[RMDB]
RNA sequence: GGGAACGACUCGAGUAGAGUCGAAAAGAUAUGGAAAUCCCAUGGGAGCUCGUGGUCGGAAACGACCACAGAGCGAAGAACAUGGAUUUCCUAAGUCAAAACAGGGAAGGCUUCGGCCUUCCCUGAAUCAGUGUAUUUACUUCGGUAAAUACACUGAAAAAGAAACAACAACAACAAC
Reactivity to 2A3 in 0.01 (KOAc 150mM, MgCl2 10mM, bicine 150mM(pH8.5), 24C), signal-to-noise 2, nucleotides 027 to 126: g000a010u020a010u000g000g050a010a000a010u090c120c100c010a010u010g060g030g030a300g010c000u000c010g020u010g000g010u020c000g000g000a010a000a000c010g000a000c000c000a010c020a040g010a000g000c020g010a060a080g060a000a000c000a000u000g000g000a000u020u000u010c010c000u000a010a010g000u000c000a000a010a140a200c010a010g030g020g020a000a000g010g040c030u210u300c300g110g050c010c000u000u020c000c000c010u000g000a000a000
Reactivity to DMS in 0.01 (KOAc 150mM, MgCl2 10mM, bicine 150mM(pH8.5), 24C), signal-to-noise 2, nucleotides 027 to 126: g000a000u000a040u020g000g000a010a000a000u000c200c060c090a010u010g000g010g010a020g030c000u000c020g020u000g000g000u010c000g010g000a000a010a040c000g020a010c000c000a000c000a000g010a010g030c010g030a080a110g020a170a260c010a010u000g010g000a020u000u000u000c010c000u010a000a090g000u000c000a120a050a130a290c020a010g000g020g000a030a010g000g000c000u010u020c280g010g010c000c000u000u000c000c000c000u000g010a020a040